An RNA of 177 nucleotides, treated with 2A3 and DMS and read out base by base. Conditions: 150 mM KOAc, 10 mM MgCl2 and 150 mM bicine (pH 8.5), 24 C. The data come from the RNA Mapping Database (RMDB), libraries RFM100 and RFMREP.

RNA sequence: GGGAACGACUCGAGUAGAGUCGAAAAUCAUAUCAACUGAACAGUCUAUCUUCUUCAAGGAACGCUUCGUUCACCAUCAACUCAAUCAAAAUGACUCCCUGCUCCGCAACACCUGCUCCUGCUCCAGCCGUAAAAUCAUUUUCGAAUGAUUUUACGGAAAAGAAACAACAACAACAAC
Reactivity to 2A3 in 0.01 (KOAc 150mM, MgCl2 10mM, bicine 150mM(pH8.5), 24C), signal-to-noise 9, nucleotides 027 to 126: u070c010a020u080a030u140c040a030a070c040u060g040a040a030c010a060g050u010c020u070a140u010c020u080u000c010u080u060c060a060a050g080g010a090a030c030g020c050u070u060c050g040u020u030c030a050c070c000a050u070c030a030a080c030u020c070a040a140u040c030a040a080a040a130u140g050a070c010u020c010c000c000u010g010c010u020c010c010g020c010a030a040c010a020c020c000u020g000c010u010c000c000u010g020c010u000c010c010a040g020
Reactivity to DMS in 0.01 (KOAc 150mM, MgCl2 10mM, bicine 150mM(pH8.5), 24C), signal-to-noise 8, nucleotides 027 to 126: u020c050a070u010a090u010c090a070a070c090u000g020a070a090c110a050g000u010c030u010a090u010c040u000u000c030u000u000c090a080a090g010g000a050a080c080g010c060u010u010c060g030u000u000c020a080c040c030a060u010c060a050a080c070u000c060a050a070u010c110a040a050a080a080u020g000a090c060u000c010c020c010u010g000c040u010c020c030g030c090a050a060c100a060c030c010u000g010c030u000c020c000u010g020c040u000c020c050a100g010